[RMDB]
RNA sequence: GGGAACGACUCGAGUAGAGUCGAAAACUGGACUUUCUGACCAUCUUCCUUGUGUUCACUCAGCCUACAGAUUUGGUACCUGGAUUUCUGUCCAUGGUGAUUUCUGUCACCUUACUACUGAAGAAGAGGCAUAAAUAUUCUUCGGAAUAUUUAUGCCAAAAGAAACAACAACAACAAC
Reactivity to 2A3 in 0.01 (KOAc 150mM, MgCl2 10mM, bicine 150mM(pH8.5), 24C), signal-to-noise 3, nucleotides 027 to 126: c030u030g050g030a030c020u060u130u020c050u120g090a090c010c020a030u030c010u030u060c010c000u030u060g050u010g020u180u100c020a020c050u050c010a040g020c000c010u040a020c010a060g080a100u060u060u080g090g000u090a050c010c020u020g060g000a050u070u140u160c130u230g030u030c000c010a040u050g000g010u000g010a010u070u160u060c060u130g020u030c040a050c010c010u040u040a040c050u020a040c020u030g060a070a030g040a060a020g050a110
Reactivity to DMS in 0.01 (KOAc 150mM, MgCl2 10mM, bicine 150mM(pH8.5), 24C), signal-to-noise 2, nucleotides 027 to 126: c080u010g010g000a090c030u010u020u000c050u010g010a090c050c030a110u000c050u000u000c010c000u000u010g020u000g000u010u000c040a080c070u010c040a070g030c040c040u010a100c050a080g010a070u000u030u000g040g000u010a050c020c040u010g000g000a050u000u010u010c150u020g000u000c010c030a050u000g020g010u010g010a060u000u010u000c130u000g010u000c040a030c070c030u010u000a100c070u000a080c080u000g000a090a120g000a150a080g000a170
About this RNA:
The data come from the RNA Mapping Database (RMDB), library RFMREP. Chemical mapping of a 177-nucleotide RNA with 2A3 and DMS. For DMS the reverse transcriptase was MarathonRT. Reactivities are rounded to 0.1 and cut off at 0 and 3. The DMS profile rests on 2,070 reads. 2A3 adducts were read by reverse transcription with SuperScript II with manganese.